[RMDB]
RNA sequence: GGGAACGACUCGAGUAGAGUCGAAAAUCAGCAAUGGCAGAUGCUCCUUCCCCUGCCAUGCUGCUGCCUUGCGGGUGGAUCUCAGACUGCUGCACUAGCAGUGAGCAAGGCUCCAUGGGCAUGGGACAGUGCCGUUACAGUUCGCUGUAACGGCACUAAAAGAAACAACAACAACAAC
Reactivity to 2A3 in 0.01 (KOAc 150mM, MgCl2 10mM, bicine 150mM(pH8.5), 24C), signal-to-noise 1, nucleotides 027 to 126: u080c050a030g000c060a070a280u090g120g000c000a000g030a060u130g070c010u050c020c010u080u170c000c030c000c010u000g010c000c030a000u030g000c070u100g000c030u040g000c010c000u000u010g010c010g080g040g000u120g060g080a150u060c060u020c020a080g060a060c000u010g000c030u020g000c110a010c260u060a010g000c010a000g000u000g010a010g000c030a000a000g000g000c010u000c010c010a040u120g020g010g010c010a020u040g030g020g000a020c070
Reactivity to DMS in 0.01 (KOAc 150mM, MgCl2 10mM, bicine 150mM(pH8.5), 24C), signal-to-noise 2, nucleotides 027 to 126: u010c130a070g020c030a150a100u020g010g010c010a020g030a210u010g000c100u010c080c050u000u000c010c000c010c090u000g000c010c000a000u000g000c070u000g010c100u000g000c020c000u000u000g020c030g020g020g000u000g020g000a100u000c070u010c050a200g000a060c010u000g000c010u010g010c220a140c210u010a020g000c010a000g000u000g010a170g000c060a050a010g010g010c020u000c040c020a060u010g020g010g000c010a000u000g000g020g000a060c240
This 177-nucleotide RNA was probed chemically with 2A3 and DMS. Reactivities are given for positions 27 through 126. The reactions ran in a buffer of 150 mM KOAc, 10 mM MgCl2 and 150 mM bicine (pH 8.5), at 24 C.